[RMDB]
RNA sequence: GGGAACGACUCGAGUAGAGUCGAAAAGAGUACAUAUGCCCAGCCUUACUGGGUCGGCUGGAUGCUUCGUGCAAAUGCUAUGUACGCCUACGUAUAUGUGCGUAGAUGCCUAUAUUUUCUCUCCUGAGAAAAUAUAGAUGCAUACAAAGACCAUGCACCGUAUAAAUCGGUUCGCCGAUUUAUACGGAAAAGAAACAACAACAACAAC
Reactivity to DMS in 0.01 (KOAc 150mM, MgCl2 10mM, bicine 150mM(pH8.5), 24C), signal-to-noise 1, nucleotides 027 to 156: g010a100g010u000a090c110a100u000a060u000g030c040c000c000a050g030c050c080u000u000a120c080u010g030g040g040u000c130g000g030c030u020g010g000a240u000g000c020u000u010c110g030u000g000c020a020a140a150u000g000c020u000a050u000g000u070a020c000g000c040c000u000a050c000g020u000a090u010a060u000g040u010g060c020g000u000a040g030a060u000g020c030c000u050a010u000a030u000u000u000u000c000u000c000u000c300c300u010g010a020g010a040a020a000a020u000a000u000a010g000a110u000g040c020a020u010a100c070a080a120a040g000a110c050c030a150u000g000c080a240
Reactivity to 2A3 in 0.01 (KOAc 150mM, MgCl2 10mM, bicine 150mM(pH8.5), 24C), signal-to-noise 4, nucleotides 027 to 156: g060a020g010u010a010c010a020u010a030u300g010c010c000c000a000g000c010c020u130u150a120c120u240g140g000g070u080c020g010g000c000u020g020g020a050u120g010c040u100u190c200g150u180g010c020a060a070a090u280g000c010u020a010u000g000u000a000c030g020c000c010u010a020c020g050u070a070u030a070u270g150u050g080c000g010u010a030g010a060u020g000c000c000u000a000u000a000u020u010u000u000c000u000c020u050c040c170u170g000a000g000a000a000a000a000u000a000u000a000g010a030u160g000c000a010u040a070c030a020a080a010g040a000c000c030a020u060g050c010a030
The data come from the RNA Mapping Database (RMDB), library OK3TST. Chemical mapping of a 207-nucleotide RNA with DMS and 2A3. For DMS, 2,538 sequencing reads were counted. Values cover nucleotides 27 to 156. The RNA was probed in 150 mM KOAc, 10 mM MgCl2 and 150 mM bicine (pH 8.5) at 24 C. The 2A3 profile rests on 2,424 reads. 2A3 adducts were read by reverse transcription with SuperScript II with manganese.